An RNA of 207 nucleotides, treated with DMS and 2A3 and read out base by base. Reactivities are rounded to 0.1 and cut off at 0 and 3. The reactions ran in a buffer of 150 mM KOAc, 10 mM MgCl2 and 150 mM bicine (pH 8.5), at 24 C. It was measured as part of the RMDB library M2RFPK.
RNA sequence: GGGAACGACUCGAGUAGAGUCGAAAAACAACAUGCCCAGGUAGCCCAGACCUUCAAGGCCACGGUGCGUUGCGACGCACGGUCUGAUUCUUCACAACGACGUUCACCGCGUCUUCUUCCAUCCCCCUCCAGCGCACGAAGUUCGCUUCGUGCGCAACACUAAACCAAUGUUCGCAUUGGUUUAGUGAAAAGAAACAACAACAACAAC
Reactivity to DMS in 0.01 (KOAc 150mM, MgCl2 10mM, bicine 150mM(pH8.5), 24C), signal-to-noise 2, nucleotides 027 to 156: a090c010a090a060c050a130u000g020c040c000c030a100g000g030u000a070g010c000c020c050a130g000a050c020c010u020u000c070a110a090g020g020c000c020a110c060g000g040u000g010c020g040u000u000g030c130g020a130c040g050c010a030c040g020g020u010c030u020g010a170u000u000c040u010u010c030a120c060a050a110c040g020a070c020g020u000u000c070a100c050c080g000c040g010u000c010u000u000c020u000u000c020c030a110u020c010c000c010c010c010u010c020c040a160g000c000g000c000a020c000g010a010a010g030u000u010c250g060c040u010u000c000g020u010g000c000g030c000a010a050
Reactivity to 2A3 in 0.01 (KOAc 150mM, MgCl2 10mM, bicine 150mM(pH8.5), 24C), signal-to-noise 2, nucleotides 027 to 156: a000c080a000a020c030a080u200g030c000c000c000a010g040g030u030a020g010c000c010c020a020g030a050c010c010u110u090c090a120a050g030g000c020c000a060c140g120g000u010g000c000g000u010u080g060c150g100a000c000g010c000a000c010g000g010u000c020u020g040a090u120u020c030u080u090c070a080c050a180a050c090g040a010c020g050u090u120c040a030c070c040g000c020g030u020c030u050u000c010u050u040c040c070a150u110c020c000c010c000c000u000c010c010a010g000c000g000c000a000c000g000a010a000g010u040u040c040g030c070u000u000c000g010u010g000c000g010c000a000a000
For 2A3 the reverse transcriptase was SuperScript II with manganese.